[RMDB]
RNA sequence: GGGAACGACUCGAGUAGAGUCGAAAAGAUAUGGAUCUUAAGAAGGGAGAAGGGCAAUCGAAGAACGUUAUCGGAAACGAUAACGGGAGAUUGCCAACUUCUUUGAUCUUCUUAAGAUCCUAAGUCACAGUAGAUUCUGGUUCGCCAGAAUCUACUGAAAAGAAACAACAACAACAAC
Reactivity to DMS in 0.01 (KOAc 150mM, MgCl2 10mM, bicine 150mM(pH8.5), 24C), signal-to-noise 1, nucleotides 027 to 126: g010a050u000a300u000g040g000a000u000c000u000u010a020a000g010a010a010g010g010g010a050g050a010a010g040g000g040c010a010a000u000c000g030a140a240g040a160a170c000g000u000u000a000u000c000g010g000a100a110a160c000g000a010u010a000a000c010g000g000g030a090g000a020u000u000g020c010c000a030a030c030u010u010c000u000u000u010g000a100u000c030u000u000c010u010u000a010a000g000a010u000c010c000u010a000a120g010u000c040a230